Notes:
An RNA of 207 nucleotides, treated with DMS and 2A3 and read out base by base.

[RMDB]
RNA sequence: GGGAACGACUCGAGUAGAGUCGAAAAGCCAGCCAGCCGGACGCCAUCAACAACCCGGAGCUGCGUGAAAAACUGUUCACCUUUGAGGUGGAUAUUCUGCGCAACGAUGUGUGCGAUAUCAGCCUGAAUCUGCAACUGACGGAGCGUGUACUGGUCACAACGUAUUAAUAUUCGUAUUAAUACGUUGAAAAGAAACAACAACAACAAC
Reactivity to DMS in 0.01 (KOAc 150mM, MgCl2 10mM, bicine 150mM(pH8.5), 24C), signal-to-noise 3, nucleotides 027 to 156: g030c030c020a160g030c000c020a120g040c050c020g010g000a100c040g010c040c060a120u000c080a080a100c040a100a140c020c030c010g010g020a300g040c020u000g020c010g030u000g010a060a050a040a050a070c080u010g010u000u010c000a020c000c000u010u000u010g010a160g020g020u000g000g020a010u000a120u000u010c020u000g040c000g020c010a030a070c050g000a200u010g020u010g040u010g020c030g000a150u000a060u000c030a060g020c020c020u000g000a110a070u010c060u010g000c020a060a060c010u010g010a050c030g020g010a190g020c030g000u000g020u000a050c030u010g000g010u000c060a180
Reactivity to 2A3 in 0.01 (KOAc 150mM, MgCl2 10mM, bicine 150mM(pH8.5), 24C), signal-to-noise 9, nucleotides 027 to 156: g050c010c000a010g020c020c010a030g040c030c020g040g010a040c040g030c070c040a140u120c030a070a140c020a050a100c020c020c010g020g020a040g010c030u040g000c040g020u050g040a090a030a020a050a050c070u050g020u020u010c010a040c040c000u080u140u300g160a110g020g000u020g000g010a000u010a040u060u050c070u160g020c000g000c010a040a090c080g100a170u120g090u030g010u020g090c010g010a020u030a050u090c030a030g080c010c030u070g030a050a070u020c040u110g020c030a050a030c060u050g020a040c040g040g030a040g020c030g010u070g010u030a070c030u030g030g010u060c060a020
The reactions ran in a buffer of 150 mM KOAc, 10 mM MgCl2 and 150 mM bicine (pH 8.5), at 24 C. Source: RMDB library OK3TST, as collected in RNAgym. For 2A3 the reverse transcriptase was SuperScript II with manganese.